This 177-nucleotide RNA was probed chemically with 2A3 and DMS. For DMS, 3,715 sequencing reads were counted. For DMS the reverse transcriptase was MarathonRT.

RNA sequence: GGGAACGACUCGAGUAGAGUCGAAAAUGCGCGGUGGCACAGCCUGGGCCCGCUCAAGCGGGGCCGCAGGGCCAAGGGGUGCUUGCGCCACCCACGUCCCAGGGGAGUCCGUGGUGGGGCUGGGGCCGCGAUUAGUAGAUUUCGAUCUACUAAUCGCAAAAGAAACAACAACAACAAC
Reactivity to 2A3 in 0.01 (KOAc 150mM, MgCl2 10mM, bicine 150mM(pH8.5), 24C), signal-to-noise 3, nucleotides 027 to 126: u150g010c020g020c030g130g040u070g050g000c050a020c030a070g090c000c000u050g020g040g000c010c000c010g040c030u190c160a170a120g020c020g040g040g100g060c020c030g080c010a050g010g000g000c040c020a040a050g030g020g000g020u080g040c030u080u100g010c020g000c000c010a040c010c020c000a030c040g030u030c000c010c010a010g030g030g000g010a080g100u060c070c050g030u090g010g110u140g020g010g010g040c080u070g010g020g000g020c040c040
Reactivity to DMS in 0.01 (KOAc 150mM, MgCl2 10mM, bicine 150mM(pH8.5), 24C), signal-to-noise 3, nucleotides 027 to 126: u020g020c070g030c110g010g030u000g010g010c020a060c050a080g000c010c000u000g010g010g020c000c000c020g020c040u000c250a100a150g030c010g010g000g010g010c050c040g010c100a110g030g000g020c040c070a120a110g000g000g010g020u010g010c050u000u000g020c060g000c050c050a070c010c000c010a120c090g010u000c000c000c000a200g000g000g010g000a140g010u000c070c050g000u020g010g000u010g000g000g000g000c090u000g000g000g000g000c110c160
The reactions ran in a buffer of 150 mM KOAc, 10 mM MgCl2 and 150 mM bicine (pH 8.5), at 24 C.